[RMDB]
RNA sequence: GGGAACGACUCGAGUAGAGUCGAAAACUGUGAGGCUUCGGCCUCACAGAUAGGUUUCUUUUUAGUGAUUUUUCCAAACCCCUUUGUCCAAAAAUCAUUAAACUCGCGUACGUUUCGACGUACGCAAAGAACAAAUUAGUUUCGACUAAUUUGUUCUAAAAGAAACAACAACAACAAC
Reactivity to 2A3 in 0.01 (KOAc 150mM, MgCl2 10mM, bicine 150mM(pH8.5), 24C), signal-to-noise 5, nucleotides 027 to 126: c000u010g010u010g000a000g010g000c030u040u120c300g170g000c010c000u000c000a000c010a000g000a000u030a020g040g010u000u040u050c030u020u170u030u020u020a010g010u010g030a020u030u010u010u050u010c050c020a060a080a190c060c000c010c050u090u140u210g070u080c040c020a000a010a000a010a020u020c010a010u010u040a040a040a030c090u090c140g000c000g000u000a000c000g000u010u050u120c200g070a010c000g010u000a000c000g000c000a020a030
Reactivity to DMS in 0.01 (KOAc 150mM, MgCl2 10mM, bicine 150mM(pH8.5), 24C), signal-to-noise 4, nucleotides 027 to 126: c010u000g010u000g010a010g010g020c000u000u010c230g030g000c000c000u000c000a000c010a000g010a070u010a070g010g010u000u000u000c010u000u000u000u000u000a020g010u000g000a010u010u000u000u010u000c060c030a030a070a180c090c060c070c120u010u010u000g000u000c110c090a010a020a020a020a020u000c010a010u010u000a020a040a060c300u000c160g010c000g010u000a000c000g000u000u000u010c150g020a030c000g010u000a000c000g020c000a010a000